[RMDB]
Conditions: 150 mM KOAc, 10 mM MgCl2 and 150 mM bicine (pH 8.5), 24 C.
Chemical mapping of a 207-nucleotide RNA with DMS and 2A3.
DMS adducts were read by reverse transcription with MarathonRT.

RNA sequence: GGGAACGACUCGAGUAGAGUCGAAAAGAUAGAUAGUACUCGUAAAAACUCUCUUUCGCAGGCCGCGUAUUUUGAGAGACGAAGCCGUGAAGUAGCGAAAGCUACGACGAAGCGCGUGGGCGGCCGAUGCGCGAACAGCAUCACGUACGAGUACGAAGAUAAUGCUGAUCUUCGGAUCAGCAUUAUCAAAAGAAACAACAACAACAAC
Reactivity to DMS in 0.01 (KOAc 150mM, MgCl2 10mM, bicine 150mM(pH8.5), 24C), signal-to-noise 1, nucleotides 027 to 156: g000a170u000a160g030a160u010a120g010u000a010c010u010c020g020u000a020a080a060a130a180c040u000c020u000c030u030u000u010c080g020c040a130g030g000c040c030g000c000g010u010a070u000u000u010u040g000a050g050a070g030a030c050g000a120a150g000c050c000g010u030g020a080a240g010u000a010g000c000g020a150a030a300g030c010u000a020c000g010a060c090g000a060a100g010c000g010c000g040u000g030g030g010c030g000g000c020c010g000a060u000g030c010g080c060g010a050a120c080a120g010c030a140u000c000a100c090g020u000a060c030g000a030g000u000a000c000g000a090a130
Reactivity to 2A3 in 0.01 (KOAc 150mM, MgCl2 10mM, bicine 150mM(pH8.5), 24C), signal-to-noise 3, nucleotides 027 to 156: g050a060u230a020g020a030u060a030g000u010a010c000u000c010g000u010a000a010a010a130a140c060u070c000u000c050u020u210u140c120g000c070a050g020g000c020c010g000c040g020u120a300u030u210u140u130g060a050g000a010g020a020c010g020a030a020g030c030c010g050u060g030a140a030g000u010a000g000c010g040a030a060a030g000c000u000a000c010g020a010c060g100a120a020g020c010g010c000g030u020g020g030g020c000g000g000c000c000g020a020u010g010c010g010c020g000a070a030c040a080g070c010a050u080c020a000c040g010u020a010c010g000a000g000u000a000c000g010a050a000